RNA sequence: GGGAACGACUCGAGUAGAGUCGAAAAUACCUUGAGUAUUGCUGAAUUCAGUUUAGCGUGCAUGCUCUUGGCUAUUCUCAUAGUGAUUGUCAAAUUUGGAGUUACUUAUUCGUGAAUUCAAUAUUUAAAAAGGUGCCGAUGUUCGCAUCGGCACCAACAGACAUUACUACUUCGGUAGUAAUGUCUGAAAAGAAACAACAACAACAAC
Reactivity to DMS in 0.01 (KOAc 150mM, MgCl2 10mM, bicine 150mM(pH8.5), 24C), signal-to-noise 2, nucleotides 027 to 156: u000a070c000c020u000u000g010a090g030u000a050u000u020g020c020u020g020a050a070u000u000c170a180g040u000u020u000a050g020c040g000u000g070c150a220u000g000c010u000c020u000u010g030g020c030u000a070u000u000c020u000c040a190u000a190g020u000g000a160u000u000g000u000c030a060a060a170u000u000u000g010g000a070g010u000u000a020c020u000u000a210u000u000c120g020u000g020a040a060u000u000c020a030a120u010a050u000u000u000a050a060a110a150a130g010g030u000g020c000c010g000a040u000g000u010u010c290g020c040a010u000c020g040g000c020a010c040c000a010a050
Reactivity to 2A3 in 0.01 (KOAc 150mM, MgCl2 10mM, bicine 150mM(pH8.5), 24C), signal-to-noise 4, nucleotides 027 to 156: u110a010c010c000u010u030g000a000g010u020a050u170u150g020c040u030g030a130a090u120u180c090a120g170u050u110u150a130g040c120g020u110g040c030a020u020g000c000u000c000u010u000g000g000c000u060a090u050u000c030u010c030a050u090a070g200u110g050a130u070u080g070u110c070a020a090a160u090u100u090g030g000a020g030u050u020a020c030u080u120a060u270u150c060g030u020g050a040a030u030u040c020a010a030u050a150u160u180u240a100a090a060a050a050g000g010u000g000c030c000g000a000u020g010u040u060c180g010c090a010u000c000g010g000c000a000c000c000a000a000

Overview:
The data come from the RNA Mapping Database (RMDB), library M2RFPK. An RNA of 207 nucleotides, treated with DMS and 2A3 and read out base by base. For 2A3 the reverse transcriptase was SuperScript II with manganese. Values cover nucleotides 27 to 156.